[RMDB]
RNA sequence: GGGAACGACUCGAGUAGAGUCGAAAAGCUGCCUCUGACGUCCUUCUCCCCCGGAAACGGGGCCGAAGGGUGGUAAGGCGCGUCGCCUGGCGCUGGCACGGGUAUGCGUGGCGGUCGACCCUGGCCGCCUAAUACCCAGCUUCGGCUGGGUAUUAGGAAAAGAAACAACAACAACAAC
Reactivity to 2A3 in 0.01 (KOAc 150mM, MgCl2 10mM, bicine 150mM(pH8.5), 24C), signal-to-noise 6, nucleotides 027 to 126: g010c020u030g020c020c000u080c190u230g080a020c010g020u010c000c000u010u000c000u050c010c010c000c000c000g000g010a010a010a000c010g000g000g000g000c010c010g010a010a000g010g010g000u010g020g040u060a040a030g020g000c020g000c000g070u080c050g070c030c060u060g060g000c030g010c050u070g100g000c070a040c090g040g000g040u100a060u290g040c060g030u050g020g020c000g000g010u040c020g040a170c000c000c020u020g030g000c000c000g010
Reactivity to DMS in 0.01 (KOAc 150mM, MgCl2 10mM, bicine 150mM(pH8.5), 24C), signal-to-noise 9, nucleotides 027 to 126: g010c020u000g010c010c000u000c170u000g010a150c090g000u000c000c000u000u000c000u010c300c000c000c000c000g010g010a070a070a190c010g020g000g010g030c050c070g000a010a010g000g010g010u000g010g010u010a130a110g000g000c020g010c030g010u000c100g010c060c050u000g000g000c030g020c030u000g010g010c040a070c140g000g000g010u000a020u010g010c050g020u000g010g010c000g000g010u000c010g000a170c030c010c030u000g000g010c010c020g010